Source: RMDB library OK3TST, as collected in RNAgym.
An RNA of 207 nucleotides, treated with DMS and 2A3 and read out base by base.
Conditions: 150 mM KOAc, 10 mM MgCl2 and 150 mM bicine (pH 8.5), 24 C.
The 2A3 profile rests on 2,324 reads.
2A3 adducts were read by reverse transcription with SuperScript II with manganese.
DMS adducts were read by reverse transcription with MarathonRT.

RNA sequence: GGGAACGACUCGAGUAGAGUCGAAAAGGCAAAUACGAUAGUCUAGAUUGACCGAUGGUAGACUCUAAUUUAUUGAGUGCUUUGUCGACGAGUUUACUUUUACGCUCCAUCGAUAGAUGGCACUGUUCUAUGAGAUCGUCGUACAUGGGAAAUGAAAAAUAUCGUGGGAAUUCGUUCCCACGAUAUUAAAAGAAACAACAACAACAAC
Reactivity to DMS in 0.01 (KOAc 150mM, MgCl2 10mM, bicine 150mM(pH8.5), 24C), signal-to-noise 3, nucleotides 027 to 156: g000g010c050a060a060a080u000a090c050g000a080u000a030g030u010c030u000a090g000a200u000u010g000a120c040c010g000a120u000g020g010u010a160g020a050c020u000c020u000a050a120u010u010u000a080u010u010g010a080g070u000g000c020u000u000u000g010u000c010g030a040c090g000a090g020u000u000u000a050c110u000u010u000u010a090c120g000c030u000c020c010a040u000c000g010a140u000a090g010a070u000g000g000c060a020c020u000g020u010u000c080u010a080u010g010a070g010a070u000c040g030u000c030g010u010a040c040a100u000g000g000g000a060a040a130u000g000a040a120a090
Reactivity to 2A3 in 0.01 (KOAc 150mM, MgCl2 10mM, bicine 150mM(pH8.5), 24C), signal-to-noise 4, nucleotides 027 to 156: g030g000c020a050a020a060u150a080c090g040a060u090a130g030u020c040u020a080g040a160u020u050g090a170c020c050g060a050u040g110g020u030a020g010a030c000u000c000u030a090a140u120u110u190a140u090u200g050a020g000u040g020c000u020u040u090g010u040c010g000a000c020g000a000g020u040u120u090a160c040u050u070u110u110a040c060g010c030u000c030c020a030u000c010g030a010u040a120g070a050u070g030g000c040a000c030u030g080u090u010c050u050a070u100g020a030g000a100u020c010g020u000c010g020u060a040c010a080u060g010g000g070a040a090a110u130g060a060a010a090
Background: Reactivities are given for positions 27 through 156.